An RNA of 177 nucleotides, treated with DMS and read out base by base.
The DMS profile rests on 925 reads.
The reactions ran in a buffer of 150 mM KOAc, 10 mM MgCl2 and 150 mM bicine (pH 8.5), at 24 C.
[RMDB]
RNA sequence: GGGAACGACUCGAGUAGAGUCGAAAAGUGAAAAACAACUAAUUUAGGUAACUUUUGAUCCUAGUAUUUGAACUCUGUCCUCAGGAUAAAGACAAAAAGAUUGAAAGAAACAUUGAACUCUAGUUAAUGGACUACUGUUAUUCGUAACAGUAGUCCAAAAAGAAACAACAACAACAAC
Reactivity to DMS in 0.01 (KOAc 150mM, MgCl2 10mM, bicine 150mM(pH8.5), 24C), signal-to-noise 2, nucleotides 027 to 126: g010u010g010a020a040a130a040a050c080a020a060c010u000a120a130u000u010u010a060g010g000u000a010a230c010u000u000u000u000g000a020u000c010c020u010a160g000u000a110u000u000u000g010a160a090c040u000c020u010g000u000c010c040u000c120a090g000g010a050u010a040a040a000g010a200c060a010a040a090a190a080g010a020u010u010g000a040a030a050g010a060a150a010c070a040u010u010g010a010a050c160u010c160u010a020g000u000u000a070a160